[RMDB]
Structure probing data (2A3) for a 207-nucleotide construct.
The reactions ran in a buffer of 150 mM KOAc, 10 mM MgCl2 and 150 mM bicine (pH 8.5), at 24 C.
RNA sequence: GGGAACGACUCGAGUAGAGUCGAAAAGCAAAUAUUGUCUUAAUUACUUAGGCUAAAAGAAAUAAGUAUUAAAGCGGGACAAGGCAUCGACAUUUGAUACAAAUAUUGAUCAAUGGAUGUCUUACUUAAACCUCAUCCGGCUUCGGCCGGAUGAGAACUCUUCCUAAAGCUUCGGCUUUAGGAAGAGAAAAGAAACAACAACAACAAC
Reactivity to 2A3 in 0.01 (KOAc 150mM, MgCl2 10mM, bicine 150mM(pH8.5), 24C), signal-to-noise 1, nucleotides 027 to 156: g020c000a000a020a140u180a240u050u110g090u060c060u140u080a230a230u030u070a050c000u000u030a000g060g050c030u150a160a000a160a010g050a000a130a070u030a000a020g000u000a030u100u120a300a000a000g020c010g040g030g000a030c020a050a000g000g000c000a000u000c010g090a090c030a050u100u090u210g020a000u180a080c020a050a140a140u230a200u260u270g020a030u000c000a000a000u000g040g010a000u000g010u020c000u000u000a000c000u080u130a060a060a090c020c000u050c000a000u000c000c000g060g000c040u070u280c240g050g000c000c010g000g020a000u000g000a000g000a000a000